Structure probing data (DMS) for a 177-nucleotide construct.
The RNA was probed in 150 mM KOAc, 10 mM MgCl2 and 150 mM bicine (pH 8.5) at 24 C.
It was measured as part of the RMDB library OK2TST.
RNA sequence: GGGAACGACUCGAGUAGAGUCGAAAAGCGAGUCCCUCCGCCUCGAGGGUCGCGAGGGCCCGGUCGACCGAGGCCUUGAUCGUAUUUACGCGGACGGCGUUGCCAAGCGGCCGCCGACAGGCCGCCACAUGAGCAUCAGCUUCGGCUGAUGCUCAUGAAAAGAAACAACAACAACAAC
Reactivity to DMS in 0.01 (KOAc 150mM, MgCl2 10mM, bicine 150mM(pH8.5), 24C), signal-to-noise 1, nucleotides 027 to 126: g010c020g000a080g010u010c020c000c010u000c030c130g010c060c020u000c030g000a050g010g080g020u000c020g040c090g000a140g010g020g000c010c000c000g070g040u030c190g000a130c040c010g020a080g000g020c000c040u010u000g000a100u010c040g050u000a090u000u010u030a050c120g010c050g010g020a100c020g050g010c030g020u050u020g010c020c030a240a200g000c110g030g030c000c000g020c020c040g000a070c150a130g010g020c000c000g030c080c140a200